The data come from the RNA Mapping Database (RMDB), library ARCHII.
This 207-nucleotide RNA was probed chemically with DMS and 2A3.
For DMS, 11,784 sequencing reads were counted.
Reactivities are rounded to 0.1 and cut off at 0 and 3.
2A3 adducts were read by reverse transcription with SuperScript II with manganese.
[RMDB]
RNA sequence: GGGAACGACUCGAGUAGAGUCGAAAAAAGUGGAGGCUGCAUGCCGCGGAUGAUUCGUUGGCCGCGUUACCAAUUCGGAUCAAACAAACUAAAUGCGAACUCUAACGAGCUUGCCCUCGCCGCUUAAUUGACGGUGACGUUCCUCCAGUGAAGUCUGCAAUACGUAAAUGUUCGCAUUUACGUAUUGAAAAGAAACAACAACAACAAC
Reactivity to DMS in 0.01 (KOAc 150mM, MgCl2 10mM, bicine 150mM(pH8.5), 24C), signal-to-noise 4, nucleotides 027 to 156: a080a040g030u000g010g010a180g020g040c050u000g030c060a120u000g030c040c040g080c050g000g020a290u000g010a040u000u000c020g030u000u000g010g030c030c060g030c210g050u000u000a060c030c010a000a100u010u000c040g060g020a030u000c030a080a090a240c070a110a070a130c070u000a030a090a120u010g000c040g000a030a040c010u000c020u000a060a110c080g010a060g000c010u000u010g010c010c020c020u000c020g010c000c010g000c010u000u000a080a160u000u010g020a030c000g000g000u000g000a060c000g010u000u000c020c010u000c040c030a120g010u000g010a080a100g010u000c020u000g000
Reactivity to 2A3 in 0.01 (KOAc 150mM, MgCl2 10mM, bicine 150mM(pH8.5), 24C), signal-to-noise 8, nucleotides 027 to 156: a010a010g070u080g030g030a070g030g010c070u140g080c140a090u170g010c040c020g010c020g010g010a070u060g000a010u020u020c010g010u020u060g040g020c060c030g090c100g130u120u080a040c010c000a000a030u130u140c030g010g010a010u010c020a020a080a030c040a040a050a010c040u100a040a080a060u130g030c020g020a140a100c000u000c000u030a020a020c010g000a010g000c040u070u140g050c030c000c010u000c010g000c010c000g020c020u080u090a130a120u300u120g070a160c010g000g000u020g010a000c000g000u010u000c000c000u050c030c020a010g020u030g110a100a010g090u050c020u020g000